[RMDB]
RNA sequence: GGGAACGACUCGAGUAGAGUCGAAAAGAUAUGGACUACCCUUUGGAAUGAGGGACAUUCGUUUUAAUAUGCGGUCGGAAACGACCGGCAUAUAGAAUGUCCCUCAUUCCAAAGGUAGUCCUAAGUCCACUUAUCCUAGCUUCGGCUAGGAUAAGUGAAAAGAAACAACAACAACAAC
Reactivity to DMS in 0.01 (KOAc 150mM, MgCl2 10mM, bicine 150mM(pH8.5), 24C), signal-to-noise 1, nucleotides 027 to 126: g000a150u010a300u010g000g000a010c000u000a010c200c070c060u000u000u010g000g020a020a000u000g020a040g040g000g020a020c000a000u000u000c000g040u000u000u000u030a080a180u000a000u000g050c010g010g000u000c000g010g000a140a110a300c010g010a000c000c010g030g010c000a040u010a000u000a080g010a050a000u000g020u020c000c010c010u000c000a000u010u000c000c000a000a000a000g010g000u000a000g010u000c000c010u000a010a070g010u010c030

Structure probing data (DMS) for a 177-nucleotide construct. Source: RMDB library TTRINS, as collected in RNAgym. For DMS, 1,611 sequencing reads were counted.